Source: RMDB library OK2TST, as collected in RNAgym. Chemical mapping of a 177-nucleotide RNA with 2A3 and DMS. For DMS, 5,966 sequencing reads were counted. For DMS the reverse transcriptase was MarathonRT.
RNA sequence: GGGAACGACUCGAGUAGAGUCGAAAACGCGGUGAUGGUGUCGCGAUCCUCACGCACCUCGAGGCGAACGCUGCGCGAACCGGAGGAGCCGGCCAGCGCGUCUCGCAAGAACUUCAGCUGCUCGGACAUAACCCCCAAUAUUCGUAUUGGGGGUUAUAAAAGAAACAACAACAACAAC
Reactivity to 2A3 in 0.01 (KOAc 150mM, MgCl2 10mM, bicine 150mM(pH8.5), 24C), signal-to-noise 1, nucleotides 027 to 126: c040g020c060g000g040u080g010a120u190g030g000u030g020u070c000g010c020g010a030u050c000c010u050c010a030c030g040c000a020c010c000u040c010g010a010g000g030c000g010a140a010c060g050c020u060g000c040g000c020g090a100a070c020c000g010g020a140g060g060a010g210c010c000g010g000c000c010a010g000c030g010c000g020u000c010u000c010g010c010a000a050g080a060a040c030u130u060c030a050g040c020u100g020c030u010c040g000g000a010c000
Reactivity to DMS in 0.01 (KOAc 150mM, MgCl2 10mM, bicine 150mM(pH8.5), 24C), signal-to-noise 6, nucleotides 027 to 126: c080g010c010g020g030u010g000a080u000g010g020u000g010u000c040g020c030g010a100u010c020c020u010c200a110c110g010c020a060c050c030u010c050g020a100g020g020c000g020a070a120c090g000c050u000g020c100g010c060g000a130a150c020c020g000g010a270g020g010a180g050c040c010g000g020c070c020a160g010c020g020c020g010u000c050u010c010g010c120a090a070g010a080a070c100u000u000c060a100g000c030u000g010c050u000c040g000g000a300c160